[RMDB]
Annotation: The record gives the reactivity of an RNA of 177 nucleotides to DMS and 2A3. 2A3 adducts were read by reverse transcription with SuperScript II with manganese. For DMS, 1,030 sequencing reads were counted. Reactivities are given for positions 27 through 126.

RNA sequence: GGGAACGACUCGAGUAGAGUCGAAAAAAAAGCUAUUAAUGUUUUGAGAGAAUUCAGGAAAGAGAUUAGAAGGAUGCUGAAUAUCUUGAAUAGGAGACGCAGAUCUGCAGGCAUGAUCAUUAUGCUGGUGAUUACCAUCAUUCGUGAUGGUAAUCACAAAAGAAACAACAACAACAAC
Reactivity to DMS in 0.01 (KOAc 150mM, MgCl2 10mM, bicine 150mM(pH8.5), 24C), signal-to-noise 2, nucleotides 027 to 126: a040a020a080a070g000c010u000a120u010u000a060a080u020g010u000u010u000u000g010a180g010a060g010a080a040u000u000c030a050g000g040a100a090a090g000a100g000a110u000u030a090g040a100a100g040g020a090u010g000c000u000g010a040a030u000a100u000c010u000u000g000a050a080u010a050g020g010a050g010a070c130g010c030a040g000a080u000c050u000g000c100a110g010g020c070a020u010g040a060u000c150a050u010u000a030u010g010c050u000g010
Reactivity to 2A3 in 0.01 (KOAc 150mM, MgCl2 10mM, bicine 150mM(pH8.5), 24C), signal-to-noise 1, nucleotides 027 to 126: a000a000a000a000g080c110u090a090u070u080a210a090u100g020u030u120u040u070g040a080g010a000g000a100a100u030u000c000a040g100g060a080a100a000g130a020g010a090u070u140a030g060a140a010g110g000a020u060g090c020u000g000a020a000u060a050u040c000u030u000g070a050a060u100a150g080g000a100g050a010c000g000c060a050g020a110u030c010u090g010c020a060g010g020c040a030u040g020a050u070c000a040u030u130a060u050g040c070u070g070